[RMDB]
RNA sequence: GGGAACGACUCGAGUAGAGUCGAAAACCAUUCCUUAUACCUUGAGUAUUGCUGAAUUCAGUUUAGCGUGCAUGCUCUUGGCUAUUCUCAUAGUGAUUGUCAAAUUUGGCGUUACUUAUUCGUCAAUAAAACACUACCACGUUCGCGUGGUAGUGAAGUGUUUGGUCUAGUUCGCUAGACCAAACACAAAAGAAACAACAACAACAAC
Reactivity to 2A3 in 0.01 (KOAc 150mM, MgCl2 10mM, bicine 150mM(pH8.5), 24C), signal-to-noise 2, nucleotides 027 to 156: c000c010a010u100u100c030c000u120u140a040u090a160c000c000u030u000g000a000g040u050a020u070u160g010c090u080g050a140a090u180u120c130a300g140u100u090u110a060g000c040g000u120g100c010a010u010g000c000u000c000u000u000g000g000c000u000a050u070u080c150u050c180a230u210a180g180u100g030a180u090u160g100u170c010a000a060a220u030u000u030g000g000c000g000u000u110a120c030u210u170a300u090u180c000g000u000c000a000a050u110a040a160a030a000c000a000c000u000a000c000c000a000c000g040u050u060c000g040c000g060u000g000g020u000a000g000u000g000a030a000
Source: RMDB library M2RFPK, as collected in RNAgym. Structure probing data (2A3) for a 207-nucleotide construct. Conditions: 150 mM KOAc, 10 mM MgCl2 and 150 mM bicine (pH 8.5), 24 C.